[RMDB]
RNA sequence: GGGAACGACUCGAGUAGAGUCGAAAAGAUAUGGAACCGGCUGGACAUGUUAGUUCGGAAACGAAGUAACAACAGCCAGCGGUUCCUAAGUCAAACCGUGUGGUUGUGUUCGCACAACCACACGGAACAAAUACAAUUCGUUCGCGAAUUGUAUUUGAAAAGAAACAACAACAACAAC
Reactivity to DMS in 0.01 (KOAc 150mM, MgCl2 10mM, bicine 150mM(pH8.5), 24C), signal-to-noise 7, nucleotides 027 to 126: g000a030u000a240u010g000g000a010a010c010c000g040g040c000u000g000g000a100c100a150u010g000u000u000a010g000u000u000c000g000g000a050a050a150c010g010a010a010g000u000a000a010c010a030a100c270a160g000c000c000a000g000c000g000g010u000u000c010c000u000a000a050g000u000c030a140a120a170c000c000g020u000g010u000g000g020u000u000g020u000g010u000u020c210g010c010a010c000a000a000c000c000a000c000a000c000g000g000a030a070
Reactivity to 2A3 in 0.01 (KOAc 150mM, MgCl2 10mM, bicine 150mM(pH8.5), 24C), signal-to-noise 5, nucleotides 027 to 126: g000a010u030a020u070g000g000a000a000c010c030g300g090c100u010g000g040a210c070a240u050g010u020u030a180g160u080u010c000g000g010a010a010a000c000g000a010a010g140u010a000a010c030a020a040c040a110g060c000c000a000g010c000g010g000u000u000c000c000u000a010a000g020u010c030a050a050a120c000c000g000u000g000u000g000g020u000u000g010u010g040u050u100c300g050c120a000c010a010a000c000c000a000c000a000c000g000g010a000a000

Notes: The record gives the reactivity of an RNA of 177 nucleotides to DMS and 2A3. For 2A3 the reverse transcriptase was SuperScript II with manganese. Values cover nucleotides 27 to 126. Source: RMDB library TTRDEL, as collected in RNAgym. The 2A3 profile rests on 21,044 reads.